[RMDB]
RNA sequence: GGGAACGACUCGAGUAGAGUCGAAAAUAUAAUCACUCAUCGUGAUGUGGCAUAUCAAAUCGAUUGCUUCUACCGGGAAGAAAACAGUCGUGUGGAAACAAUGCUCAGUGUGAAUGCCCCACAGCCAGGCAUUUUAUCCAUUCGUGGAUAAAAUGCCAAAAGAAACAACAACAACAAC
Reactivity to DMS in 0.01 (KOAc 150mM, MgCl2 10mM, bicine 150mM(pH8.5), 24C), signal-to-noise 1, nucleotides 027 to 126: u010a090u020a090a060u000c040a020c010u040c160a190u020c150g000u000g010a040u000g000u000g010g020c030a080u020a100u000c030a000a120a060u020c090g000a030u010u000g050c010u010u000c030u000a070c030c010g000g010g010a070a030g000a130a020a040a070c130a050g010u000c010g010u000g060u000g010g010a030a040a070c060a000a060u000g000c110u000c070a070g000u010g020u000g000a100a050u000g030c000c040c030c030a050c060a050g010c070c110a120
Reactivity to 2A3 in 0.01 (KOAc 150mM, MgCl2 10mM, bicine 150mM(pH8.5), 24C), signal-to-noise 1, nucleotides 027 to 126: u170a020u060a010a070u040c000a010c020u090c110a230u160c120g000u030g010a020u070g060u020g040g000c010a000u050a020u110c030a050a060a030u070c020g000a050u010u080g000c010u000u020c010u050a040c000c050g040g120g030a120a060g030a070a250a060a070c050a050g080u080c000g010u020g010u070g220g010a030a100a000c000a040a000u090g040c010u040c140a030g030u000g020u020g300a060a030u040g010c020c000c010c010a050c000a020g190c000c040a010
Description: The record gives the reactivity of an RNA of 177 nucleotides to DMS and 2A3. The DMS profile rests on 655 reads. For 2A3 the reverse transcriptase was SuperScript II with manganese. The data come from the RNA Mapping Database (RMDB), library OK2TST.